[RMDB]
RNA sequence: GGGAACGACUCGAGUAGAGUCGAAAAGAUAUGGAUUGUACAGCGAUAAGCUGGCGUCGGAAACGACGUUCAGCUUUUGACGCUGACGGGUCCUAAGUCAAAACUUGGGACGUUCGCGUCCCAAGAACACCAAAUACACCUUCGGGUGUAUUUGGUGAAAAGAAACAACAACAACAAC
Reactivity to 2A3 in 0.01 (KOAc 150mM, MgCl2 10mM, bicine 150mM(pH8.5), 24C), signal-to-noise 2, nucleotides 027 to 126: g020a000u030a020u050g020g020a050u050u140g020u110a290c010a000g000c010g120a220u050a300a030g010c020u000g000g010c000g020u020c010g000g030a050a020a030c020g000a000c000g010u010u090c010a000g000c030u030u010u030u100g100a020c010g000c010u010g000a000c010g080g000g000u000c010c000u010a040a020g030u030c020a050a000a120a140c010u000u020g000g000g010a020c010g000u040u050c290g010c030g050u000c050c030c000a000a010g000a010a000
Reactivity to DMS in 0.01 (KOAc 150mM, MgCl2 10mM, bicine 150mM(pH8.5), 24C), signal-to-noise 3, nucleotides 027 to 126: g020a020u010a180u010g000g000a040u000u010g010u010a100c010a010g010c000g000a140u000a020a020g010c000u000g000g000c000g020u000c000g020g000a060a040a110c000g010a010c010g020u000u020c000a010g000c000u000u000u000u010g010a160c050g030c000u000g020a030c080g000g010g010u000c000c000u000a040a130g000u000c010a090a060a080a180c000u000u000g020g000g010a000c000g020u000u010c170g030c000g000u000c000c000c000a010a020g010a060a180